Conditions: 150 mM KOAc, 10 mM MgCl2 and 150 mM bicine (pH 8.5), 24 C. Chemical mapping of a 177-nucleotide RNA with 2A3 and DMS. The DMS profile rests on 3,328 reads. Values cover nucleotides 27 to 126. Source: RMDB library TTRDEL, as collected in RNAgym. 2A3 adducts were read by reverse transcription with SuperScript II with manganese.
RNA sequence: GGGAACGACUCGAGUAGAGUCGAAAAGAUAUGGAAUCGUCUUACGGCUGGAACUAUUCGGAAACGAACGAAUUCCAGAACUACCGUUUGACGAUUCCUAAGUCAAAGAGCCUCUUCGGAGGCUCAACCUAAUACCCAUGUUCGCAUGGGUAUUAGGAAAAGAAACAACAACAACAAC
Reactivity to 2A3 in 0.01 (KOAc 150mM, MgCl2 10mM, bicine 150mM(pH8.5), 24C), signal-to-noise 3, nucleotides 027 to 126: g010a000u070a020u130g010g000a010a010u000c010g000u010c010u030u020a010c020g000g000c000u010g010g000a040a070c080u040a160u040u010c000g010g070a130a120a090c040g020a040a020c040g050a170a300u020u000c010c000a020g010a020a030c100u180a060c020c000g010u000u000u010g000a000c010g000a000u000u000c010c000u000a000a010g020u000c020a000a090a120g010a010g000c000c000u000c040u090u150c300g130g000a000g010g000c000u000c000a000a000
Reactivity to DMS in 0.01 (KOAc 150mM, MgCl2 10mM, bicine 150mM(pH8.5), 24C), signal-to-noise 3, nucleotides 027 to 126: g010a040u000a300u020g000g000a010a000u000c000g020u000c000u000u000a010c010g000g000c000u000g000g010a010a010c070u000a300u010u000c000g000g000a120a070a160c030g000a010a010c140g020a080a130u000u000c000c010a010g020a060a030c090u010a300c030c020g000u000u000u000g000a010c000g000a020u000u000c000c000u000a020a110g010u010c030a070a080a100g000a010g010c000c000u000c000u010u000c170g010g010a010g000g010c000u000c000a000a070